[RMDB]
Conditions: 150 mM KOAc, 10 mM MgCl2 and 150 mM bicine (pH 8.5), 24 C. Chemical mapping of a 207-nucleotide RNA with 2A3 and DMS. It was measured as part of the RMDB library M2RFPK. DMS (dimethyl sulfate) methylates the pairing face of unpaired adenines and cytosines.
RNA sequence: GGGAACGACUCGAGUAGAGUCGAAAAAGUGCACUAGGUACGCCUAGUGCACAUUCCAGGACAUACUGCUGAGGAUGUCAAAAAUGCAGUUGGAGUCCUCAACUGGAUAGGCUACGUCCUAUCCAGAAAAAGACUUGGUUGUUCGCAACCAAGUCAAGAUUGUCAAUAGGUUCGCCUAUUGACAAUCAAAAGAAACAACAACAACAAC
Reactivity to 2A3 in 0.01 (KOAc 150mM, MgCl2 10mM, bicine 150mM(pH8.5), 24C), signal-to-noise 3, nucleotides 027 to 156: a000g020u010g000c010a010c010u010a000g000g030u060a030c220g050c000c000u000a010g000u020g000c000a000c010a000u000u030c000c000a000g000g010a010c000a010u170a030c010u040g000c040u050g040a070g200g010a290u250g260u300c090a030a080a020a010a000u160g020c000a010g010u020u030g030g100a120g020u000c000c000u020c040a030a110c000u000g000g000a010u010a010g010g000c050u220a060c180g090u140c030c000u000a010u000c000c000a000g000a000a030a010a000a010g000a000c000u000u010g000g010u000u000g030u020u050c160g050c090a000a000c000c000a000a000g000u000c000a000a010
Reactivity to DMS in 0.01 (KOAc 150mM, MgCl2 10mM, bicine 150mM(pH8.5), 24C), signal-to-noise 2, nucleotides 027 to 156: a080g030u010g000c000a000c010u010a000g000g000u000a090c300g030c020c020u010a020g030u000g000c020a000c000a010u000u000c020c000a200g010g030a110c030a060u010a060c000u020g020c060u000g010a130g010g020a090u000g000u000c030a020a060a080a080a150u000g000c050a070g020u000u000g010g010a250g030u000c000c000u020c030a050a180c000u000g000g000a010u000a010g010g010c030u010a190c200g020u020c000c010u000a000u000c000c000a010g000a010a080a070a170a130g000a040c000u000u000g040g020u010u010g010u010u010c290g030c020a020a000c000c000a000a000g000u000c010a000a060
Annotation
2A3 is a SHAPE reagent: it acylates the 2'-hydroxyl of flexible nucleotides of all four kinds.